[RMDB]
RNA sequence: GGGAACGACUCGAGUAGAGUCGAAAAGAAGCAUGCUGAGUUUUUGAGCGUCCGUGAUACUUUUGUAUCUAAAUCGGACGACGUUUUAUAUACGUCAAGUAUAUAGUGAGGGGGUGAGGCAUGCGAACCCAAAUGAAAUCUUCGGAUUUCAUUUGGGAAAAGAAACAACAACAACAAC
Reactivity to 2A3 in 0.01 (KOAc 150mM, MgCl2 10mM, bicine 150mM(pH8.5), 24C), signal-to-noise 9, nucleotides 027 to 126: g110a060a020g000c010a010u010g000c020u020g040a070g130u080u050u040u180u220g250a200g040c000g000u000c000c010g020u050g010a000u000a010c030u080u240u280u300g010u000a010u000c030u060a070a120a130u150c010g000g000a000c010g000a010c010g000u020u010u160u010a010u010a000u010a010c020g030u040c200a090a090g000u000a000u000a000u020a030g120u120g130a160g000g020g010g000g020u050g040a040g010g000c000a000u000g000c000g000a010a010
Reactivity to DMS in 0.01 (KOAc 150mM, MgCl2 10mM, bicine 150mM(pH8.5), 24C), signal-to-noise 8, nucleotides 027 to 126: g010a130a250g000c020a000u000g000c020u000g000a300g000u010u010u010u020u010g000a190g010c000g000u000c000c000g020u010g010a010u000a000c010u020u030u020u040g010u000a000u000c010u010a030a110a100u040c010g000g000a010c010g000a020c040g010u040u030u020u010a010u000a000u000a000c000g000u030c300a090a170g010u000a000u000a010u000a010g000u030g010a150g000g010g010g000g010u010g000a300g000g000c010a000u000g000c000g000a080a080